[RMDB]
RNA sequence: GGGAACGACUCGAGUAGAGUCGAAAAGAAAGGCGAACACACACGACUACUCAGAAAUGAGUAGGCCGAAAUAAAACCUCACAAUAAAAAGUGUGUGGAUGAUCGAAAGAUCAGGUGAGGAAAGAAAGGGUACAUACAUGUUCGCAUGUAUGUACCCAAAAGAAACAACAACAACAAC
Reactivity to 2A3 in 0.01 (KOAc 150mM, MgCl2 10mM, bicine 150mM(pH8.5), 24C), signal-to-noise 5, nucleotides 027 to 126: g160a020a090a000g060g020c050g050a080a010c030a000c000a000c000a000c020g030a010c000u000a000c000u010c000a000g010a040a070a040u030g000a020g000u000a000g000g000c020c020g070a050a090a000u170a020a040a020a010c000c000u020c010a020c040a050a180u300a160a110a020a010a010g000u020g000u010g000u000g020g010a100u060g000a000u010c010g030a100a060a030g000a000u000c010a000g010g010u010g000a000g030g150a040a050a010g230a040a070a040
Reactivity to DMS in 0.01 (KOAc 150mM, MgCl2 10mM, bicine 150mM(pH8.5), 24C), signal-to-noise 3, nucleotides 027 to 126: g000a090a060a100g000g010c020g000a140a060c010a010c000a010c000a060c020g030a300c000u000a000c000u000c000a000g000a190a060a140u000g000a030g000u000a000g000g000c010c010g010a110a060a080u050a070a010a080a040c000c000u000c000a000c010a060a080u030a050a030a090a110a150g000u010g000u000g000u000g000g020a050u000g000a010u070c000g000a210a090a100g000a000u000c000a040g020g000u010g010a010g000g000a140a040a130g000a070a110a030